[RMDB]
RNA sequence: GGGAACGACUCGAGUAGAGUCGAAAACCCCUUCAGUUCGCUGAAGGGGAAAGGGUUCUCCCGCCCGCCGUGAACCCAGGCUAAAAGUUAAGGUACGUGGGCAAACCCUACUCUUCGGAGUAGGGAACUCUUCAGUCAGGUUCGCCUGACUGAAGAGAAAAGAAACAACAACAACAAC
Reactivity to DMS in 0.01 (KOAc 150mM, MgCl2 10mM, bicine 150mM(pH8.5), 24C), signal-to-noise 1, nucleotides 027 to 126: c000c000c000c000u020u000c000a000g010u010u010c150g040c020u000g000a000a010g000g000g030g000a000a010a080g000g010g010u000u010c050u000c010c070c030g000c000c000c000g050c050c010g000u000g020a040a080c030c000c040a250g000g030c010u000a060a040a080a100g020u000u000a070a130g000g000u000a100c220g010u010g000g020g020c040a120a070a230c000c000c000u020a000c000u000c000u000u010c150g020g010a000g030u000a020g000g000g020a000a000
Reactivity to 2A3 in 0.01 (KOAc 150mM, MgCl2 10mM, bicine 150mM(pH8.5), 24C), signal-to-noise 1, nucleotides 027 to 126: c010c010c010c000u000u000c000a050g010u000u110c140g000c090u000g010a000a010g000g020g000g030a080a090a060g010g010g000u070u080c010u010c030c010c020g000c020c010c000g050c020c020g030u030g010a010a010c000c000c000a010g130g000c000u050a040a050a040a190g070u140u120a060a050g070g060u110a070c070g040u030g020g000g000c020a000a050a190c010c000c000u000a000c000u010c010u000u070c220g150g000a000g020u010a010g000g000g000a000a000